[RMDB]
RNA sequence: GGGAACGACUCGAGUAGAGUCGAAAAGGGGUCUCCACUCAGCGUCGAAGAACAUGAACUACAGCUGAAGCCUCCACGGCUGCAUGGGAGACGCUACGCGAGUGGAGACGGAGGCACCCAAAAUCGCUAAAAACGCGUUCGCGCGUUUUUAGCGAAAGAUGCUACUUUACUUCGGUAAAGUAGCAUCAAAAGAAACAACAACAACAAC
Reactivity to 2A3 in 0.01 (KOAc 150mM, MgCl2 10mM, bicine 150mM(pH8.5), 24C), signal-to-noise 2, nucleotides 027 to 156: g020g000g040g010u030c000u010c000c000a000c010u030c040a040g000c010g010u020c040g140a290a030g010a020a020c010a010u030g030a060a090c090u190a110c240a020g010c020u030g000a050a010g020c010c010u000c000c010a010c000g020g010c000u010g000c000a010u000g010g020g010a050g010a000c020g000c040u110a060c130g040c040g070a020g010u000g020g000a000g000a000c010g000g000a000g000g000c000a040c000c000c000a080a080a000a080u050c000g000c000u000a030a000a000a000a010c000g030c020g040u060u080c300g000c000g010c000g100u010u010u000u000u000a000g000c000g000a000a000a010